[RMDB]
Conditions: 150 mM KOAc, 10 mM MgCl2 and 150 mM bicine (pH 8.5), 24 C. This 177-nucleotide RNA was probed chemically with 2A3 and DMS. For 2A3, 40,261 sequencing reads were counted. Reactivities are rounded to 0.1 and cut off at 0 and 3. For DMS the reverse transcriptase was MarathonRT.
RNA sequence: GGGAACGACUCGAGUAGAGUCGAAAAGAUAUGGACCAAGUGCCAGCUAUGGGUCGGAAACGACCUUUAGCGGUAAUACUUGUGUCCUAAGUCAAAACCUGAGUAACCGUUCGCGGUUACUCAGGAAGUUGUAGUAAUAGUUCGCUAUUACUACAACAAAAGAAACAACAACAACAAC
Reactivity to 2A3 in 0.01 (KOAc 150mM, MgCl2 10mM, bicine 150mM(pH8.5), 24C), signal-to-noise 7, nucleotides 027 to 126: g020a010u050a030u100g000g000a000c000c000a010a000g010u010g060c100c140a150g000c110u000a010u020g020g000g010u000c000g000g010a050a080a020c000g000a000c000c000u000u010u000a000g000c000g000g020u060a080a030u070a040c010u030u020g100u140g000u190c000c000u010a090a010g040u020c030a020a030a090a190c000c000u000g000a000g010u000a010a000c020c020g010u060u080c300g010c010g150g000u000u000a000c000u000c000a000g000g000a000a020
Reactivity to DMS in 0.01 (KOAc 150mM, MgCl2 10mM, bicine 150mM(pH8.5), 24C), signal-to-noise 7, nucleotides 027 to 126: g000a030u000a300u010g000g010a010c010c000a010a010g020u000g010c030c040a130g030c000u000a000u000g000g000g000u000c000g010g000a060a070a170c010g010a010c000c000u000u000u000a000g020c010g010g010u000a050a120u010a110c000u000u000g000u020g010u000c000c000u000a010a090g000u000c030a100a080a110a160c000c000u000g000a010g000u000a000a000c000c000g020u000u010c240g020c000g000g010u000u000a000c000u000c000a000g010g010a010a020